Structure probing data (2A3 and DMS) for a 170-nucleotide construct.
[RMDB]
RNA sequence: GGGAACGACUCGAGUAGAGUCGAAAAUAUGGUGGAGCUUCAGUGUGUCUCUAUUGCCGUGCGCAUAUAGAACAUCCUGAUGUCUCUGGUGUUUGUAAAUAUAAGGGUAAGUUUGUCCAAAUCCCUGAGCCUAUAGUCUUCGGACUAUAGAAAAGAAACAACAACAACAAC
Reactivity to 2A3 in 0.01 (KOAc 150mM, MgCl2 10mM, bicine 150mM(pH8.5), 24C), signal-to-noise 8, nucleotides 027 to 129: u280a070u080g190g010u100g030g020a000g020c000u010u000c000a000g030u020g010u010g010u050c050u000c000u230a000u000u030g000c050c050g270u230g070c210g000c030a010u070a020u000a300g020a000a000c000a010u020c010c010u000g010a020u010g110u050c000u000c000u000g000g060u030g040u020u120u040g110u060a060a090a040u150a020u060a110a060g020g020g040u050a100a110g080u050u140u140g160u070c070c030a020a020a040u040c000c000c000u020g010a040g050c000
Reactivity to DMS in 0.01 (KOAc 150mM, MgCl2 10mM, bicine 150mM(pH8.5), 24C), signal-to-noise 8, nucleotides 027 to 129: u020a070u030g000g010u010g000g000a030g000c030u000u010c000a000g000u000g020u000g000u010c150u000c020u000a010u000u010g000c000c020g060u030g000c180g040c010a020u060a000u020a030g030a000a000c000a000u010c220c000u000g000a000u000g030u070c030u000c000u020g000g020u020g000u020u000u030g010u040a050a070a040u050a120u040a110a100g010g010g010u000a080a100g010u030u030u030g020u000c070c040a070a140a100u000c000c000c000u000g010a080g010c220
The 2A3 profile rests on 16,287 reads.
The DMS profile rests on 81,368 reads.
The RNA was probed in 150 mM KOAc, 10 mM MgCl2 and 150 mM bicine (pH 8.5) at 24 C.